Notes
The record gives the reactivity of an RNA of 177 nucleotides to 2A3 and DMS.
RNA sequence: GGGAACGACUCGAGUAGAGUCGAAAAGAAAGGCAGCUAGUGCAGCCCACGCAGCGGCAUGCUUUUGCAUGCCCAGUCGAGCCCACGACUUAGGGCAGCUGCGUCACUGAGGGCAGCUGCCGAAAGAAUAUGGUAGUGAUUUCGAUCACUACCAUAUAAAAGAAACAACAACAACAAC
Reactivity to 2A3 in 0.01 (KOAc 150mM, MgCl2 10mM, bicine 150mM(pH8.5), 24C), signal-to-noise 5, nucleotides 027 to 126: g090a020a070a020g020g000c010a010g020c020u160a060g140u140g210c070a020g010c030c030c010a020c010g050c010a010g000c020g030g000c020a010u020g030c030u200u270u230u300g000c020a000u010g000c000c000c000a010g000u020c030g000a010g000c010c010c000a010c010g090a030c020u070u200a060g040g050g010c020a010g000c000u000g010c000g030u030c030a110c140u160g080a150g010g030g000c020a000g000c000u000g000c000c000g000a000a000a000g010a010
Reactivity to DMS in 0.01 (KOAc 150mM, MgCl2 10mM, bicine 150mM(pH8.5), 24C), signal-to-noise 7, nucleotides 027 to 126: g010a100a140a160g010g010c010a020g010c000u000a110g010u010g010c140a100g010c020c040c170a070c050g010c030a030g020c050g010g000c040a020u000g000c040u000u010u000u000g020c000a060u000g000c010c000c040a030g000u010c060g000a180g000c020c010c010a300c040g010a050c060u000u010a110g010g010g020c100a110g010c000u000g010c020g010u000c250a100c120u000g000a060g020g010g010c010a050g020c000u000g010c000c010g000a020a060a090g010a120

Source: RMDB library OK2TRN, as collected in RNAgym. Reactivities are given for positions 27 through 126. Values are in units of 0.01, from 0 to 300, in steps of 10. For 2A3 the reverse transcriptase was SuperScript II with manganese.